RNA sequence: GGGAACGACUCGAGUAGAGUCGAAAAGAGAGAAAUACCGCGCGCAAUCCGAGAAAGGACGGUAAGGACGCGGAAGCAGAAUCGUCCUUCCACGCAAGAAAGAGCGAAAAUAGACGGAUAGAGAGAGGAUGCAUAGCAGGUUCGCCUGCUAUGCAUCAAAAGAAACAACAACAACAAC
Reactivity to DMS in 0.01 (KOAc 150mM, MgCl2 10mM, bicine 150mM(pH8.5), 24C), signal-to-noise 3, nucleotides 027 to 126: g020a170g000a100g020a090a050a120u050a130c050c040g000c040g020c040g030c140a100a090u010c000c000g050a080g010a050a010a050g000g010a030c030g000g030u010a130a080g030g000a120c180g030c060g020g080a170a100g010c060a090g000a100a070u000c010g010u020c020c020u000u020c010c110a170c040g000c100a050a030g010a060a040a070g000a090g000c030g000a050a030a030a080u000a020g010a070c060g000g030a100u010a140g030a090g000a060g000a100g000
Reactivity to 2A3 in 0.01 (KOAc 150mM, MgCl2 10mM, bicine 150mM(pH8.5), 24C), signal-to-noise 3, nucleotides 027 to 126: g050a000g010a010g040a000a130a050u100a020c000c000g000c000g000c000g020c050a000a060u070c010c000g010a020g080a170a050a040g060g000a020c010g020g040u070a060a070g090g020a030c020g000c000g040g020a040a000g000c040a000g020a130a050u030c010g000u000c000c000u030u020c010c010a110c030g000c070a070a020g030a120a070a010g090a050g040c030g110a040a070a000a000u140a040g040a010c040g010g010a000u090a030g090a020g000a000g000a020g070
Structure probing data (DMS and 2A3) for a 177-nucleotide construct. The RNA was probed in 150 mM KOAc, 10 mM MgCl2 and 150 mM bicine (pH 8.5) at 24 C. For 2A3 the reverse transcriptase was SuperScript II with manganese. It was measured as part of the RMDB library OK1LIB.